RNA sequence: GGGAACGACUCGAGUAGAGUCGAAAAGCAGAUGAACAAAACCGUCUGACACAAUUUGAGCUUGCUAUAGCAAGAAAGUCUAACCUAUUCCGGUGUUCUCUUUCCCCAUGAGACAAGCCGUUAUAUAACUUGUCUCUAUGUUCGCAUAGAGACAAGUAAAAGAAACAACAACAACAAC
Reactivity to DMS in 0.01 (KOAc 150mM, MgCl2 10mM, bicine 150mM(pH8.5), 24C), signal-to-noise 5, nucleotides 027 to 126: g010c040a020g010a020u000g000a070a090c140a100a050a160a150c250c010g010u000c020u000g000a090c090a060c140a090a080u010u010u010g010a120g000c020u000u000g000c020u010a140u020a110g000c020a010a030g010a040a050a050g010u010c050u010a050a070c060c030u010a060u000u000c070c030g000g010u010g020u000u000c000u000c010u000u010u000c010c000c010c030a110u000g000a030g010a030c120a020a110g010c040c070g000u010u020a060u020a050u020a090
Reactivity to 2A3 in 0.01 (KOAc 150mM, MgCl2 10mM, bicine 150mM(pH8.5), 24C), signal-to-noise 9, nucleotides 027 to 126: g030c000a000g010a040u040g020a130a090c070a120a140a030a040c050c010g010u010c010u020g140a060c010a000c020a160a160u080u070u190g040a040g040c000u010u020g000c010u100a040u100a300g000c000a010a000g040a100a060a010g080u010c050u070a050a070c020c010u040a090u120u040c040c010g020g000u040g090u170u010c010u000c000u030u080u070c010c000c000c000a040u130g020a010g000a030c040a080a060g010c000c010g040u100u020a080u020a020u010a130

Notes:
Chemical mapping of a 177-nucleotide RNA with DMS and 2A3. For DMS the reverse transcriptase was MarathonRT. It was measured as part of the RMDB libraries RFM100 and RFMREP. The reactions ran in a buffer of 150 mM KOAc, 10 mM MgCl2 and 150 mM bicine (pH 8.5), at 24 C. 2A3 adducts were read by reverse transcription with SuperScript II with manganese.